[RMDB]
The data come from the RNA Mapping Database (RMDB), library ARCHII. Chemical mapping of a 207-nucleotide RNA with DMS. The DMS profile rests on 1,642 reads. The reactions ran in a buffer of 150 mM KOAc, 10 mM MgCl2 and 150 mM bicine (pH 8.5), at 24 C. Values cover nucleotides 27 to 156.
RNA sequence: GGGAACGACUCGAGUAGAGUCGAAAAACUGACUUGUUCGCAAGUCAGUAAAAAGGGUUACUAACUCAAUGGUAGAGUAAUCGGCUUUUAACCGAUAAGUUCUGGGUUCAAUUCCCAGGUAACUCACCAAAAAAAUGGAAAGUUUCGACUUUCCAAAAGAGAACAUCUUAUUCGUAAGAUGUUCUCUAAAAGAAACAACAACAACAAC
Reactivity to DMS in 0.01 (KOAc 150mM, MgCl2 10mM, bicine 150mM(pH8.5), 24C), signal-to-noise 2, nucleotides 027 to 156: a010c000u010g000a030c000u010u000g000u000u000c300g060c010a000a000g010u020c000a000g010u000a030a030a060a070a110g030g000g000u000u000a000c020u000a090a020c000u000c030a040a090u000g000g010u010a080g010a040g000u000a300a040u000c020g010g030c020u000u000u000u000a080a120c000c000g000a030u000a020a070g020u000u000c020u000g000g010g040u020u000c100a070a300u000u000c000c000c010a070g000g000u000a000a000c000u000c020a100c010c010a000a000a050a070a100a100a150u000g010g010a010a030a060g010u000u000u000c210g000a140c000u000u000u020c010c000a000a000a020